[RMDB]
RNA sequence: GGGAACGACUCGAGUAGAGUCGAAAACGUAUCAAACUGUCGGGGCACCAGGAGCCUCUGCCUUCUCUUCGGCUGCCAAUUUCAGGGACGAGGACCGCAGCCAGGUCAGAAGCACGGUUUGCAGGGGGCGUGGCACCUGAUUCGUCAGGUGCCACGCAAAAGAAACAACAACAACAAC
Reactivity to 2A3 in 0.01 (KOAc 150mM, MgCl2 10mM, bicine 150mM(pH8.5), 24C), signal-to-noise 1, nucleotides 027 to 126: c000g150u150a000u140c050a010a000a160c060u070g070u130c250g010g040g050g000c010a000c060c040a040g150g000a020g000c010c040u000c000u000g050c000c000u020u090c020u000c000u030u000c100g000g000c000u080g010c000c000a160a130u060u190u130c060a140g000g020g060a040c050g040a020g000g000a010c020c020g000c000a000g000c040c030a000g000g000u000c070a000g000a000a000g000c090a020c220g060g000u020u180u160g000c000a000g010g000g000g010